[RMDB]
The record gives the reactivity of an RNA of 177 nucleotides to 2A3 and DMS. Values are in units of 0.01, from 0 to 300, in steps of 10.
RNA sequence: GGGAACGACUCGAGUAGAGUCGAAAACUCGUACAGUGCCUGCGAAAGCAAUCCGAUCAGGCCGUCACCGGACGGCAGGUAGAGCGGUAAGACCUUUUCGCCGAAGGCGUCUUGUGCCGCGGUCAGCGAAGCCGACAGGCUUCGGCCUGUCGGCUUCAAAAGAAACAACAACAACAAC
Reactivity to 2A3 in 0.01 (KOAc 150mM, MgCl2 10mM, bicine 150mM(pH8.5), 24C), signal-to-noise 1, nucleotides 027 to 126: c020u000c000g010u060a050c020a110g060u030g070c050c000u030g000c000g050a000a030a010g000c000a020a100u110c010c010g010a010u010c040a000g010g130c050c000g000u000c000a140c110c160g300g000a020c010g010g040c010a010g070g080u110a070g000a000g030c000g000g000u070a030a010g070a070c000c020u000u000u090u060c110g040c020c000g110a040a010g010g030c020g040u010c020u060u080g030u030g030c020c030g000c070g080g030u100c010a060g100c030
Reactivity to DMS in 0.01 (KOAc 150mM, MgCl2 10mM, bicine 150mM(pH8.5), 24C), signal-to-noise 2, nucleotides 027 to 126: c030u010c080g000u010a080c120a050g010u000g000c000c030u000g030c030g000a070a050a040g000c050a180a140u000c020c020g020a070u000c030a090g010g010c010c000g010u000c030a130c260c220g000g010a030c010g030g020c000a040g030g000u010a060g010a070g000c010g020g000u000a080a060g000a120c290c010u000u000u000u000c030g020c030c250g000a090a060g000g030c050g000u010c030u030u000g010u000g020c040c040g000c100g010g000u000c120a060g010c220